RNA sequence: GGGAACGACUCGAGUAGAGUCGAAAAGAUAUGGAACGUCUAGAACGACGAUCACUUCUACAUCGGAAACGAUGUAGAGAGUGGGAGUUCAGACGUUCCUAAGUCAAAAGAGUAGUUCGCUACUCAAGUUUUCCGUAUUGUUCGCAAUACGGAAAACAAAAGAAACAACAACAACAAC
Reactivity to 2A3 in 0.01 (KOAc 150mM, MgCl2 10mM, bicine 150mM(pH8.5), 24C), signal-to-noise 2, nucleotides 027 to 126: g020a000u040a050u110g020g010a040a000c000g010u000c020u070a300g010a040a000c000g300a050c130g000a070u170c040a000c000u050u020c000u000a010c010a010u000c010g000g000a000a040a070c030g000a020u000g010u050a000g020a000g020a020g000u020g070g070g040a120g020u000u000c010a020g000a000c000g000u020u010c000c000u020a010a000g000u000c010a020a080a070a180g000a010g000u050a000g000u070u130c250g070c180u020a000c010u020c040a030a050
Reactivity to DMS in 0.01 (KOAc 150mM, MgCl2 10mM, bicine 150mM(pH8.5), 24C), signal-to-noise 2, nucleotides 027 to 126: g020a010u020a300u000g000g000a020a000c000g000u000c010u010a230g030a010a000c010g010a160c280g000a090u040c020a010c000u000u000c010u000a000c020a010u010c000g040g010a170a120a240c020g020a000u000g010u000a000g000a010g000a030g000u010g000g010g000a100g010u020u000c000a030g010a020c000g010u000u000c000c000u030a010a040g000u010c020a110a140a120a110g000a050g010u000a010g020u000u010c270g020c000u000a030c000u010c020a150a100
An RNA of 177 nucleotides, treated with 2A3 and DMS and read out base by base. For DMS, 1,221 sequencing reads were counted. The reactions ran in a buffer of 150 mM KOAc, 10 mM MgCl2 and 150 mM bicine (pH 8.5), at 24 C. For DMS the reverse transcriptase was MarathonRT.